[RMDB]
RNA sequence: GGGAACGACUCGAGUAGAGUCGAAAAAUGCACGGCAUACGGACAUCCUUCCCCUGAGAUCCGCGGUCGAACCAGCCACGUGUCCAUCAUCAGGGGUCAACCCCGGCCAAGGGCGACGGCACGCCAAGAACAAGGGCGUAUUCGUACGCCCUUGUUCAAAAGAAACAACAACAACAAC
Reactivity to DMS in 0.01 (KOAc 150mM, MgCl2 10mM, bicine 150mM(pH8.5), 24C), signal-to-noise 1, nucleotides 027 to 126: a100u010g000c220a060c000g020g000c050a080u000a090c050g000g010a100c080a080u000c050c080u010u010c020c000c000c060u000g000a060g000a050u000c050c010g030c040g020g040u000c070g000a070a140c260c060a180g030c020c030a000c020g010u020g010u000c120c090a030u000c050a100u000c030a030g040g000g020g000u000c210a040a090c050c000c000c020g060g010c100c040a100a070g000g000g000c010g030a040c030g000g020c130a060c050g040c050c020a120a170
An RNA of 177 nucleotides, treated with DMS and read out base by base. Reactivities are given for positions 27 through 126. Source: RMDB library OK2TST, as collected in RNAgym.